Background:
The record gives the reactivity of an RNA of 207 nucleotides to DMS and 2A3. DMS adducts were read by reverse transcription with MarathonRT.

RNA sequence: GGGAACGACUCGAGUAGAGUCGAAAAGCAAGGCAAGAACAGGCGCAGCGACUACAAUGCCAUCGUUACGAUUGGCCGCUGCCGGCGGACCGGUGUCCUCUACGUCCUUGAUGCGUGGGCCCAGAAGUGUCAGGCGCACGUUGCACUGAAAGUGGCGUAUAUCAUAACCCUUCGGGGUUAUGAUAUAAAAAGAAACAACAACAACAAC
Reactivity to DMS in 0.01 (KOAc 150mM, MgCl2 10mM, bicine 150mM(pH8.5), 24C), signal-to-noise 3, nucleotides 027 to 156: g030c050a080a100g020g010c030a070a070g020a100a110c050a140g040g010c050g030c010a030g010c010g000a050c040u000a090c090a100a100u000g030c050c060a070u000c080g020u000u000a060c070g010a180u000u000g010g010c020c020g000c020u000g000c030c040g010g020c040g000g010a080c020c030g050g020u000g020u000c010c010u000c030u000a080c040g010u000c020c010u000u000g010a070u010g020c010g010u000g000g000g020c010c010c010a160g000a090a150g030u000g000u000c040a080g020g030c030g000c020a050c050g010u000u000g000c030a120c100u000g010a040a070a100g010u000g010g000c030g040
Reactivity to 2A3 in 0.01 (KOAc 150mM, MgCl2 10mM, bicine 150mM(pH8.5), 24C), signal-to-noise 5, nucleotides 027 to 156: g020c020a040a060g030g030c050a070a050g030a130a080c060a080g090g000c030g000c020a010g010c000g040a030c040u170a090c150a100a120u170g000c010c000a020u020c020g130u190u190a130c170g010a030u080u160g010g000c030c000g000c000u010g030c000c010g040g010c020g000g000a030c050c050g040g020u090g030u050c020c020u050c040u050a040c020g030u040c010c020u080u080g060a090u100g020c000g010u020g020g040g020c010c010c030a060g060a160a020g060u110g060u170c050a030g040g000c030g020c040a000c010g020u000u080g030c070a050c060u070g110a100a040a040g050u070g020g000c010g020